[RMDB]
Background: An RNA of 177 nucleotides, treated with DMS and 2A3 and read out base by base. The 2A3 profile rests on 3,093 reads. 2A3 adducts were read by reverse transcription with SuperScript II with manganese. The reactions ran in a buffer of 150 mM KOAc, 10 mM MgCl2 and 150 mM bicine (pH 8.5), at 24 C. Reactivities are given for positions 27 through 126. DMS adducts were read by reverse transcription with MarathonRT.

RNA sequence: GGGAACGACUCGAGUAGAGUCGAAAAUUAAAGGUGGUGGUGGAGGAGGUACCCCUCCAGCUGCUCAGCCGACGUACCGCACACACGCCUUUUCGGCAUAGAGCAGCAAUAGGGUAUCCAUAAAAAAUCAUUAAGUCAUCUUCGGAUGACUUAAUGAAAAAGAAACAACAACAACAAC
Reactivity to DMS in 0.01 (KOAc 150mM, MgCl2 10mM, bicine 150mM(pH8.5), 24C), signal-to-noise 4, nucleotides 027 to 126: u010u010a040a080a110g010g020u010g000g030u000g000g010u010g000g000a080g010g010a070g020g010u000a030c020c010c010c050u000c100c100a120g020c010u010g030c000u000c000a090g010c000c000g010a020c300g010u000a100c120c070g000c070a070c130a090c140a080c110g010c080c050u000u000u000u000c010g010g010c010a060u010a130g000a010g010c000a000g000c000a060a030u000a040g000g020g000u000a030u000c030c130a080u010a000a020a050a070a050a050
Reactivity to 2A3 in 0.01 (KOAc 150mM, MgCl2 10mM, bicine 150mM(pH8.5), 24C), signal-to-noise 2, nucleotides 027 to 126: u100u050a080a010a010g050g010u040g000g050u030g000g000u050g040g000a050g040g040a100g010g000u030a040c000c010c000c010u020c050c010a030g010c000u000g000c000u010c000a000g000c000c010g010a010c030g030u040a060c030c040g050c020a030c020a000c010a030c150g040c020c010u140u110u050u050c000g010g030c030a050u100a080g020a000g000c000a010g010c020a000a030u110a020g000g000g000u010a000u050c020c000a040u270a060a100a000a000a010a040